RNA sequence: GGGAACGACUCGAGUAGAGUCGAAAACAUAACUGAAAUCUCAAAUGACGGGGUAGCGUUAUGAAGGGGAUCACUAAUACUCCGAAUAGCGUCAGCCGAAUACAGACGGUUGGGGUUAUAAGCUCGGAACACUGAAUACGUUCGCGUAUUCAGUGUUAAAAGAAACAACAACAACAAC
Reactivity to DMS in 0.01 (KOAc 150mM, MgCl2 10mM, bicine 150mM(pH8.5), 24C), signal-to-noise 6, nucleotides 027 to 126: c100a050u020a050a050c100u000g010a070a110a050u010c010u010c010a090a120a120u030g010a180c070g010g000g000g010u030a080g010c060g000u000u000a010u000g010a160a120g000g000g020g000a080u030c170a100c170u030a110a080u030a110c030u000c010c000g000a180a060u000a020g000c020g000u000c000a300g000c010c000g010a050a040u010a090c210a090g020a120c060g000g010u000u000g000g000g000g010u000u000a020u010a040a080g000c090u000c050g010g000
Reactivity to 2A3 in 0.01 (KOAc 150mM, MgCl2 10mM, bicine 150mM(pH8.5), 24C), signal-to-noise 6, nucleotides 027 to 126: c020a020u110a040a030c030u060g120a010a010a060u040c030u020c050a090a130a150u160g070a090c080g020g000g000g060u060a040g040c010g030u040u030a030u070g060a070a080g020g000g000g030a020u100c030a020c100u100a090a120u170a180c020u000c000c020g040a040a020u020a010g040c080g300u010c010a010g000c010c000g010a020a010u130a080c080a040g100a050c010g000g000u000u010g010g010g000g000u010u000a040u000a130a040g050c030u040c020g020g000
Source: RMDB libraries RFM100 and RFMREP, as collected in RNAgym. This 177-nucleotide RNA was probed chemically with DMS and 2A3. For 2A3 the reverse transcriptase was SuperScript II with manganese. Reactivities are given for positions 27 through 126. Reactivities are rounded to 0.1 and cut off at 0 and 3. High DMS reactivity at an A or C suggests that its Watson-Crick edge is free.